[RMDB]
RNA sequence: GGGAACGACUCGAGUAGAGUCGAAAAGAUAUGGACUGAAGUAGGGAGCUUAUGGUCGGAAACGACCAUGAAGCGACGAUCUACCAGUCCUAAGUCAAACCUAACUGACGUUCGCGUCAGUUAGGAAUCUAGAGUAUUAGUUCGCUAAUACUCUAGAAAAAGAAACAACAACAACAAC
Reactivity to DMS in 0.01 (KOAc 150mM, MgCl2 10mM, bicine 150mM(pH8.5), 24C), signal-to-noise 7, nucleotides 027 to 126: g010a010u000a000u010g000g010a020c000u000g000a170a200g010u000a010g000g000g010a010g030c000u000u000a030u000g000g010u000c000g010g000a000a000a020c000g010a010c000c000a000u000g010a020a020g030c000g010a070c300g000a010u010c000u000a010c000c000a010g000u000c000c000u000a000a060g000u000c000a140a140a220c010c000u000a010a000c000u000g010a020c000g010u000u020c290g020c010g020u000c000a010g000u000u010a000g010g010a040a030
Reactivity to 2A3 in 0.01 (KOAc 150mM, MgCl2 10mM, bicine 150mM(pH8.5), 24C), signal-to-noise 6, nucleotides 027 to 126: g000a000u010a010u060g000g000a010c010u010g080a300a020g060u010a000g010g000g010a010g010c000u020u030a000u010g000g010u000c000g000g010a010a000a000c010g000a000c000c020a000u020g080a010a010g000c000g070a100c010g000a000u000c000u000a000c010c000a000g000u000c000c000u000a000a000g010u010c000a010a010a260c000c000u010a000a000c000u000g010a010c000g050u080u090c300g040c010g170u020c000a000g000u000u000a000g000g000a000a070